[RMDB]
The record gives the reactivity of an RNA of 177 nucleotides to DMS and 2A3.
2A3 is a SHAPE reagent: it acylates the 2'-hydroxyl of flexible nucleotides of all four kinds.
For 2A3, 1,269 sequencing reads were counted.
DMS adducts were read by reverse transcription with MarathonRT.
RNA sequence: GGGAACGACUCGAGUAGAGUCGAAAAGAUAUUGAUCACAGCAAAUAAACAAAAUGAAAACUUCAAAUAAAACAAUUAAAGCGAGUGAUCAUGAAGAAAAUAUAUUGUAAGUACAAAGUACAAGUAAACUAUAACGGAAAUUCGUUUCCGUUAUAGUAAAAGAAACAACAACAACAAC
Reactivity to DMS in 0.01 (KOAc 150mM, MgCl2 10mM, bicine 150mM(pH8.5), 24C), signal-to-noise 2, nucleotides 027 to 126: g020a130u010a030u000u000g000a010u000c000a030c010a220g010c010a030a160a030u000a160a130a090c100a070a000a070a070u000g010a070a160a250a100c230u010u000c060a030a030a110u020a170a040a150a080c080a060a040u000u010a080a090a110g000c000g020a090g020u000g010a030u010c000a040u000g000a040a090g000a000a020a060a140u010a060u000a060u000u000g000u000a060a050g000u010a000c100a070a030a130g000u000a000c010a030a050g000u000a060a080
Reactivity to 2A3 in 0.01 (KOAc 150mM, MgCl2 10mM, bicine 150mM(pH8.5), 24C), signal-to-noise 2, nucleotides 027 to 126: g030a070u070a060u080u040g030a030u000c000a010c000a030g000c060a130a110a130u180a110a230a070c050a020a070a100a080u060g040a090a140a050a030c030u140u110c070a020a030a200u280a050a060a020a000c030a000a070u230u080a140a060a000g030c010g020a070g100u000g000a000u000c000a000u030g000a000a090g100a020a060a110a000u160a020u010a050u090u090g050u090a040a060g010u000a050c060a060a270a060g030u000a010c010a070a000g030u040a010a140
DMS (dimethyl sulfate) methylates the pairing face of unpaired adenines and cytosines. The RNA was probed in 150 mM KOAc, 10 mM MgCl2 and 150 mM bicine (pH 8.5) at 24 C.